[RMDB]
RNA sequence: GGGAACGACUCGAGUAGAGUCGAAAAUUAAAGCCAUUCGUGGCUUUAAACUCUGGUGUCCCGAAAAGGCUCGUGCGCGAUCCCACGCGAACGAGUUUUCGAUUAAGGAUAAGUUCGCUUAUCCUAAAACGAGCUAAUCUUUCGAGAUUAGCUCGUUAAAAGAAACAACAACAACAAC
Reactivity to DMS in 0.01 (KOAc 150mM, MgCl2 10mM, bicine 150mM(pH8.5), 24C), signal-to-noise 1, nucleotides 027 to 126: u000u000a000a020a000g010c000c010a020u010u020c230g030u000g030g010c010u010u010u000a000a000a120c120u020c120u020g010g010u010g010u010c010c000c000g000a080a100a070a070g020g000c000u000c010g000u000g000c010g010c020g000a080u020c030c060c020a260c020g010c000g000a000a020c010g000a010g000u000u000u000u010c100g000a210u000u000a170a070g000g010a010u010a000a020g020u000u010c190g030c010u000u000a000u000c010c000u020a030a050